RNA sequence: GGGAACGACUCGAGUAGAGUCGAAAACCUCUAGCUGGAGCAUAAAUCCUGAAACAGACCCACUUUUCUCCUCAGCAUGUUAGGAAACACAUUAAAAUACACCCAUAAUCAAGCAACUCAAUCCUUAGUGAUCAACUUAUUUCGAUAAGUUGAUCACAAAAGAAACAACAACAACAAC
Reactivity to 2A3 in 0.01 (KOAc 150mM, MgCl2 10mM, bicine 150mM(pH8.5), 24C), signal-to-noise 9, nucleotides 027 to 126: c010c000u010c030u030a030g010c020u020g030g010a020g010c020a030u090a110a160a040u060c000c010u040g070a090a010a020c050a020g090a100c000c010c000a040c010u090u030u040u020c040u020c010c000u020c010a030g010c030a040u060g030u060u110a080g060g070a070a120a000c050a010c020a090u100u210a070a070a050a020u180a050c060a050c010c010c010a060u080a090a020u100c070a080a010g050c010a010a080c020u020c080a040a090u050c000c010u040u040a010
Reactivity to DMS in 0.01 (KOAc 150mM, MgCl2 10mM, bicine 150mM(pH8.5), 24C), signal-to-noise 3, nucleotides 027 to 126: c070c000u000c090u010a050g040c030u010g000g000a030g000c090a090u000a030a070a100u000c040c000u020g000a090a150a080c140a070g000a070c030c010c020a040c070u000u000u000u000c020u000c010c020u010c030a070g000c060a030u030g010u000u000a090g000g000a050a080a080c080a040c020a060u010u000a100a000a070a120u010a100c130a050c030c010c010a110u000a060a060u000c070a060a130g000c060a040a020c030u020c110a070a100u000c030c050u000u010a230
Structure probing data (2A3 and DMS) for a 177-nucleotide construct. The reactions ran in a buffer of 150 mM KOAc, 10 mM MgCl2 and 150 mM bicine (pH 8.5), at 24 C. It was measured as part of the RMDB libraries RFM100 and RFMREP. Reactivities are given for positions 27 through 126.